Source: RMDB library OK2TRN, as collected in RNAgym. An RNA of 177 nucleotides, treated with DMS and 2A3 and read out base by base. The RNA was probed in 150 mM KOAc, 10 mM MgCl2 and 150 mM bicine (pH 8.5) at 24 C. Reactivities are given for positions 27 through 126.
RNA sequence: GGGAACGACUCGAGUAGAGUCGAAAACGUGGUAGACGGCCUGCGAGUCGCGCUUGGGGUCCGGAUGGCCCCGCCAAACCUGGGUUUGCACGGCGCGCCAGAACGACACCGCUUGUGACACCACAUCCUCCAAUGCAGGGUUCGCCCUGCAUUGGAGAAAAGAAACAACAACAACAAC
Reactivity to DMS in 0.01 (KOAc 150mM, MgCl2 10mM, bicine 150mM(pH8.5), 24C), signal-to-noise 1, nucleotides 027 to 126: c200g040u000g020g010u010a070g020a280c050g020g010c040c020u010g000c080g010a090g030u000c030g000c100g010c070u000u030g030g020g020g000u030c000c060g030g020a240u060g020g010c020c010c000c020g010c190c020a020a040a050c150c060u020g000g030g000u030u000u000g030c120a040c130g000g000c000g040c050g030c030c050a050g000a130a180c120g010a110c110a060c040c050g020c050u000u010g020u000g000a060c220a090c030c020a030c030a100u010c050
Reactivity to 2A3 in 0.01 (KOAc 150mM, MgCl2 10mM, bicine 150mM(pH8.5), 24C), signal-to-noise 1, nucleotides 027 to 126: c060g030u030g000g000u050a070g030a150c050g040g000c020c010u070g010c020g060a020g020u050c020g000c000g000c060u010u080g000g010g000g020u000c050c100g090g030a080u180g050g010c030c000c000c000g000c010c010a060a020a030c030c080u300g260g000g000u050u080u050g070c090a060c050g030g000c000g000c030g030c080c000a040g040a050a010c020g020a010c030a060c020c000g030c080u060u190g020u030g000a010c000a010c060c010a000c010a090u070c000

DMS adducts were read by reverse transcription with MarathonRT.